[RMDB]
RNA sequence: GGGAACGACUCGAGUAGAGUCGAAAAGACUUUAAAGUUUGAACUUUAUGGCGCUUUUUCUGCUGUUACAUGGUUCAAGUAAAAGUGGAUUGGGUCAUCUACCAUGUGGUGAAUCUCCAACGGGUCAGGACGAACAUUGCUUCGGCGAUGUUCGUCCAAAAGAAACAACAACAACAAC
Reactivity to DMS in 0.01 (KOAc 150mM, MgCl2 10mM, bicine 150mM(pH8.5), 24C), signal-to-noise 1, nucleotides 027 to 126: g020a000c050u010u000u000a060a040a160g040u010u010u010g010a020a080c010u010u030u010a030u000g000g020c050g000c090u010u010u010u010u030c140u050g000c030u030g010u000u000a060c130a020u000g010g000u020u040c070a030a020g010u000a010a020a030a040g020u010g000g000a230u010u020g050g000g000u000c010a040u000c030u000a050c050c080a030u040g020u030g000g000u010g000a060a050u000c080u000c000c020a030a070c030g000g040g000u000c070a170
Reactivity to 2A3 in 0.01 (KOAc 150mM, MgCl2 10mM, bicine 150mM(pH8.5), 24C), signal-to-noise 2, nucleotides 027 to 126: g050a020c040u050u050u060a040a040a010g090u040u110u100g030a090a030c010u020u100u070a030u040g020g000c060g030c050u130u070u030u060u000c030u060g050c000u010g050u120u110a050c010a000u130g080g010u070u060c080a030a050g000u090a000a070a000a000g030u040g010g030a050u010u060g050g000g000u000c010a010u000c000u040a050c030c030a080u140g010u040g020g000u010g030a050a040u030c020u010c050c000a020a030c010g090g000g000u050c050a040
This 177-nucleotide RNA was probed chemically with DMS and 2A3. For DMS the reverse transcriptase was MarathonRT. The 2A3 profile rests on 1,246 reads. For 2A3 the reverse transcriptase was SuperScript II with manganese. The data come from the RNA Mapping Database (RMDB), library OK1LIB. The reactions ran in a buffer of 150 mM KOAc, 10 mM MgCl2 and 150 mM bicine (pH 8.5), at 24 C. For DMS, 1,838 sequencing reads were counted.